[RMDB]
Overview: Chemical mapping of a 177-nucleotide RNA with DMS. Reactivities are rounded to 0.1 and cut off at 0 and 3. Conditions: 150 mM KOAc, 10 mM MgCl2 and 150 mM bicine (pH 8.5), 24 C.
RNA sequence: GGGAACGACUCGAGUAGAGUCGAAAAGAUAUGGAUGUUACUGUGGGAGAUGUUGUCGGAAACGACAAUACAUCAUCGAUCACAGGUAACAUCCUAAGUCAAAGGGAGGGCCUUCGGGCCCUCCCAACAUUGAAGCUCUGUUCGCAGAGCUUCAAUGAAAAGAAACAACAACAACAAC
Reactivity to DMS in 0.01 (KOAc 150mM, MgCl2 10mM, bicine 150mM(pH8.5), 24C), signal-to-noise 3, nucleotides 027 to 126: g000a030u000a300u010g010g000a020u000g000u000u010a000c000u000g000u000g000g010g000a300g010a000u000g010u000u000g010u000c010g000g000a130a100a190c010g020a010c000a050a090u010a080c190a060u010c040a090u010c090g010a300u020c000a000c000a040g040g000u000a010a010c000a000u010c000c000u000a030a080g000u000c030a080a120a200g000g000g000a040g000g020g020c010c000u000u000c270g010g000g020c000c010c000u000c000c000c000a000a000